[RMDB]
RNA sequence: GGGAACGACUCGAGUAGAGUCGAAAAAGGUGACAUCAAGGGAGACAAAGAGUUCAUGAACUAGAAUCCUACUGCAGGAGGCCUCACGGAGUCUACAGCAAGAGUCAGUGACGGAUUCAAAGAAGGGUCGAAAUAGAUCAUUCGUGAUCUAUUUCGAAAAAGAAACAACAACAACAAC
Reactivity to DMS in 0.01 (KOAc 150mM, MgCl2 10mM, bicine 150mM(pH8.5), 24C), signal-to-noise 7, nucleotides 027 to 126: a060g000g020u010g010a080c060a040u010c070a080a090g010g010g010a060g010a100c080a050a080a080g000a070g000u000u010c050a060u000g010a100a080c090u000a110g000a070a080u000c020c010u000a050c070u010g000c080a070g010g010a060g010g000c040c010u010c110a080c120g000g010a060g000u000c010u010a050c060a080g020c120a050a050g000a050g010u000c020a040g010u000g010a100c160g010g000a150u000u000c050a040a080a080g010a070a060g000g000g010
Reactivity to 2A3 in 0.01 (KOAc 150mM, MgCl2 10mM, bicine 150mM(pH8.5), 24C), signal-to-noise 4, nucleotides 027 to 126: a000g030g010u040g020a010c020a040u060c040a040a050g040g000g000a040g020a030c030a020a120a010g070a020g030u070u070c050a050u180g070a070a030c020u020a080g020a040a010u030c010c000u030a040c030u050g010c010a020g020g060a030g020g010c000c010u050c010a050c020g040g010a030g040u000c010u040a070c030a050g040c020a070a040g030a030g150u100c030a010g010u010g040a010c060g030g000a030u020u050c050a060a060a000g070a030a040g080g020g030